[RMDB]
This 177-nucleotide RNA was probed chemically with DMS and 2A3. DMS adducts were read by reverse transcription with MarathonRT. The 2A3 profile rests on 406 reads. Reactivities are rounded to 0.1 and cut off at 0 and 3. 2A3 adducts were read by reverse transcription with SuperScript II with manganese. The DMS profile rests on 893 reads. Conditions: 150 mM KOAc, 10 mM MgCl2 and 150 mM bicine (pH 8.5), 24 C.
RNA sequence: GGGAACGACUCGAGUAGAGUCGAAAAGCGAAAAUCGACAUACCUUUGUAAUCGAACGGAUGACGGUGGCUAUGUUGACUUACUUUUUCAGGUGUGCCUUUUAGAAGUAAUAUGGCAAUGAAAGCAACCCCAGGGGUAGUUUCGACUACCCCUGGGGAAAAGAAACAACAACAACAAC
Reactivity to DMS in 0.01 (KOAc 150mM, MgCl2 10mM, bicine 150mM(pH8.5), 24C), signal-to-noise 1, nucleotides 027 to 126: g000c140g000a130a000a100a200u010c010g000a000c030a010u000a110c040c000u000u070u000g000u000a080a110u000c020g040a140a140c300g000g000a000u000g000a070c100g020g010u000g100g000c090u120a070u010g000u090u000g000a170c040u050u000a000c000u000u000u000u000u000c080a070g040g000u000g000u000g040c010c000u010u000u000u000a090g000a130a020g000u070a000a030u000a070u220g000g000c060a000a200u000g000a020a000a030g000c290a080a030
Reactivity to 2A3 in 0.01 (KOAc 150mM, MgCl2 10mM, bicine 150mM(pH8.5), 24C), signal-to-noise 1, nucleotides 027 to 126: g000c010g250a030a000a000a150u000c000g000a010c000a010u000a080c000c020u010u020u300g010u000a000a000u000c080g000a070a050c100g180g000a000u000g000a000c010g030g030u080g000g010c050u000a000u030g000u000u000g100a110c000u040u240a040c000u000u080u000u000u300c070a000g110g000u030g200u080g170c000c000u000u000u000u100a000g000a100a000g080u060a040a120u040a070u180g010g000c150a050a000u160g080a060a080a000g000c100a000a080